Chemical mapping of a 177-nucleotide RNA with DMS and 2A3. Source: RMDB library TTRDEL, as collected in RNAgym. Values cover nucleotides 27 to 126. DMS adducts were read by reverse transcription with MarathonRT. 2A3 adducts were read by reverse transcription with SuperScript II with manganese.

RNA sequence: GGGAACGACUCGAGUAGAGUCGAAAAGAUAUGGACUAUGGGAGGCUACAUUCGGAAACGAAUGCGGGCCGACGAUCAUAGGUCCUAAGUCAAAAUCUACUUCACCUGUUCGCAGGUGAAGUAGAAACUCCUUGAAUAUCUUCGGAUAUUCAAGGAGAAAAGAAACAACAACAACAAC
Reactivity to DMS in 0.01 (KOAc 150mM, MgCl2 10mM, bicine 150mM(pH8.5), 24C), signal-to-noise 3, nucleotides 027 to 126: g010a030u000a300u010g000g010a130c010u000a010u000g000g020g000a070g040g010c000u000a140c000a000u000u000c010g010g000a090a080a170c000g010a010a000u000g010c070g030g020g040c000c010g010a100c280g000a060u010c000a000u000a030g000g010u010c000c010u000a030a150g030u020c020a080a070a170a130u000c010u000a000c000u010u010c000a000c000c000u000g010u010u010c260g030c000a000g020g000u000g000a010a010g010u000a000g000a010a100a090
Reactivity to 2A3 in 0.01 (KOAc 150mM, MgCl2 10mM, bicine 150mM(pH8.5), 24C), signal-to-noise 2, nucleotides 027 to 126: g000a000u070a030u110g010g000a000c010u010a010u020g020g040g010a010g010g000c010u020a010c030a030u000u010c010g020g030a080a070a040c010g020a010a010u020g030c300g040g000g000c000c010g020a010c010g000a000u010c010a010u010a050g220g120u020c000c000u020a120a000g050u050c020a050a030a020a270u020c000u000a010c000u000u000c000a010c000c000u030g030u070u110c300g010c160a010g020g000u000g000a000a000g000u000a000g010a000a000a000